[RMDB]
RNA sequence: GGGAACGACUCGAGUAGAGUCGAAAAAGCUCCGGUUACGACCGGAGCAGGACCCACCCGGCCGGGAAUAGUGCUCCUGGUUGUUUCCGGCUCGCGUGGGUGUGUACGAGGCCAUACGUGGCCUCGAUCAGCGACACUGUUUCGACAGUGUCGCUGAAAAAGAAACAACAACAACAAC
Reactivity to 2A3 in 0.01 (KOAc 150mM, MgCl2 10mM, bicine 150mM(pH8.5), 24C), signal-to-noise 1, nucleotides 027 to 126: a000g000c000u000c000c000g000g050u040u050a160c300g000a000c040c000g000g000a000g040c000a000g000g030a000c000c000c050a000c090c100c010g010g040c000c000g000g000g020a000a000u030a060g210u170g120c070u020c140c130u300g090g000u040u000g000u000u000u000c000c000g000g000c120u180c070g000c000g010u000g000g000g010u000g030u010g010u000a070c000g010a020g000g050c000c000a000u000a030c210g090u090g000g000c010c000u030c000g000a000
This 177-nucleotide RNA was probed chemically with 2A3.
2A3 adducts were read by reverse transcription with SuperScript II with manganese.
Source: RMDB library RFM100, as collected in RNAgym.
The RNA was probed in 150 mM KOAc, 10 mM MgCl2 and 150 mM bicine (pH 8.5) at 24 C.